[RMDB]
RNA sequence: GGGAACGACUCGAGUAGAGUCGAAAAGGGCAAGGGCAGAUUGGUUUCAGAUGGUCUUCCGUGCAAUAGACCUAAAGAAAGAAGUUUCCACCACCCUCGCAGAACUGAAAGGAAAGACAGAUGAGUGAAGCACCUGAACGGAUUUGGGCUUGGUGGGUAUUCAUCGAAGGUUCGCCUUCGAUGAAUAAAAAGAAACAACAACAACAAC
Reactivity to 2A3 in 0.01 (KOAc 150mM, MgCl2 10mM, bicine 150mM(pH8.5), 24C), signal-to-noise 2, nucleotides 027 to 156: g020g000g000c040a000a020g030g000g000c020a030g040a150u100u110g090g020u040u070u040c090a080g040a120u060g030g000u000c000u080u020c080c070g060u090g030c000a020a040u030a100g010a040c000c000u110a090a070a020g050a000a090a020g070a030a030g020u010u090u010c020c000a020c030c010a020c000c040c000u020c030g050c000a000g030a120a030c000u060g040a060a030a060g040g010a080a010a000g030a010c020a020g070a080u110g020a050g090u050g030a050a010g030c010a040c050c010u040g040a080a010c050g090g000a030u180u150u160g010g000g030c050u050u060g000g000u020g010g010g000
Reactivity to DMS in 0.01 (KOAc 150mM, MgCl2 10mM, bicine 150mM(pH8.5), 24C), signal-to-noise 1, nucleotides 027 to 156: g060g010g050c030a080a060g010g000g050c020a020g010a100u000u000g010g010u020u000u000c050a100g000a140u000g010g020u010c000u000u010c040c080g000u040g040c060a060a130u000a040g010a060c010c040u000a090a120a220g020a080a020a140g010a050a130g030u010u060u000c010c000a080c000c000a060c010c010c010u000c080g070c060a100g020a080a110c110u000g010a080a050a100g000g000a120a060a090g000a190c030a080g000a070u000g010a050g000u010g000a050a150g000c010a050c030c010u050g010a060a210c060g000g000a140u000u000u000g070g050g040c040u000u000g010g060u000g000g050g000